[RMDB]
RNA sequence: GGGAACGACUCGAGUAGAGUCGAAAAUACCGUCUUCUCCCCGACGGUUUCAAUCCAUAGCUUCACGUUGUGUAGCGUAGGUGGAAGGUAUCGUGUGGUGCAUAAACACCACAUAGUCUCUUAGGGGUCAAGCUGAUAAACUUCGGUUUAUCAGCAAUGGCUAGGGAUGAUUCGUCAUCCCUAGCCAAAAAGAAACAACAACAACAAC
Reactivity to 2A3 in 0.01 (KOAc 150mM, MgCl2 10mM, bicine 150mM(pH8.5), 24C), signal-to-noise 1, nucleotides 027 to 156: u020a010c020c020g000u000c000u240u040c000u090c000c010c000c000g000a020c020g000g020u000u040u030c010a060a050u040c000c010a000u000a050g000c000u010u080c010a020c050g300u300u300g020u050g000u040a020g000c010g110u090a160g040g030u070g030g000a060a000g040g010u070a080u140c000g000u000g000u000g000g000u000g000c030a240u070a230a150a000c000a000c000c000a000c000a000u000a030g110u070c090u000c020u130u150a030g000g010g010g010u030c060a000a160g040c000u000g010a000u030a000a000a000c000u080u170c200g060g000u000u000u000a000u000c000a000g000c000a000a060
The record gives the reactivity of an RNA of 207 nucleotides to 2A3. For 2A3, 369 sequencing reads were counted. 2A3 adducts were read by reverse transcription with SuperScript II with manganese. The data come from the RNA Mapping Database (RMDB), library M2RFPK. Conditions: 150 mM KOAc, 10 mM MgCl2 and 150 mM bicine (pH 8.5), 24 C.